Structure probing data (2A3 and DMS) for a 177-nucleotide construct. The RNA was probed in 150 mM KOAc, 10 mM MgCl2 and 150 mM bicine (pH 8.5) at 24 C. For DMS, 2,444 sequencing reads were counted.
RNA sequence: GGGAACGACUCGAGUAGAGUCGAAAAGGACAGCAAGUGGACCCUACUAACAAGUGCCCUUCUAAUGCGUGCUAUCGAUUUCUCAGCCAAUCACGAAACGAGCUUGGCGCACUUGGCCAAGUUGGAAGUCCAUGGAUGGAUUCGUCCAUCCAUGGACAAAAGAAACAACAACAACAAC
Reactivity to 2A3 in 0.01 (KOAc 150mM, MgCl2 10mM, bicine 150mM(pH8.5), 24C), signal-to-noise 5, nucleotides 027 to 126: g060g020a050c020a020g060c020a100a040g040u120g070g020a090c000c020c000u020a050c040u030a110a070c040a060a030g040u030g060c000c020c000u030u050c040u100a120a080u120g040c040g040u040g030c040u050a060u190c040g120a090u000u120u040c030u010c020a050g030c040c030a050a050u100c040a030c110g090a130a110a010c100g000a030g010c010u000u000g010g000c040g010c040a120c140u050u110g020g000c000c000a010a000g000u000u010g060g040a140a050
Reactivity to DMS in 0.01 (KOAc 150mM, MgCl2 10mM, bicine 150mM(pH8.5), 24C), signal-to-noise 2, nucleotides 027 to 126: g010g000a060c000a060g000c030a000a100g010u020g000g020a140c000c000c020u000a100c110u030a060a060c140a080a030g000u030g010c010c000c020u030u000c070u000a030a090u000g000c020g010u020g020c030u020a120u010c050g000a060u000u000u000c070u030c060a040g070c040c090a030a000u030c100a090c160g040a020a070a300c070g010a030g000c010u000u010g030g000c000g000c100a050c110u030u000g000g020c000c020a010a020g060u030u000g010g000a050a130